The record gives the reactivity of an RNA of 177 nucleotides to DMS.
[RMDB]
RNA sequence: GGGAACGACUCGAGUAGAGUCGAAAAGCGUAGUUCUUCAACGGUAGAAAUACCGUUGGGAUAAAAUACCGAAAGGUAGGCCAUCCGCGUGGCCGUAGAAAUACAAAAACGCAAGAACUACGCAAAAGUGAUUGGAUACUUUCGAGUAUCCAAUCACAAAAGAAACAACAACAACAAC
Reactivity to DMS in 0.01 (KOAc 150mM, MgCl2 10mM, bicine 150mM(pH8.5), 24C), signal-to-noise 3, nucleotides 027 to 126: g050c000g030u010a000g010u000u000c000u000u010c000a000a000c010g020g010u000a010g000a080a150a200u000a000c000c010g020u000u020g030g000g020a010u000a010a090a300a150u000a000c010c000g000a150a090a100g010g010u000a020g000g000c300c190a010u000c030c010g000c000g030u000g000g010c300c120g000u000a000g000a140a100a090u000a000c000a000a020a250a190a030c000g020c000a020a000g000a020a000c000u010a000c000g000c020a000a000a030a110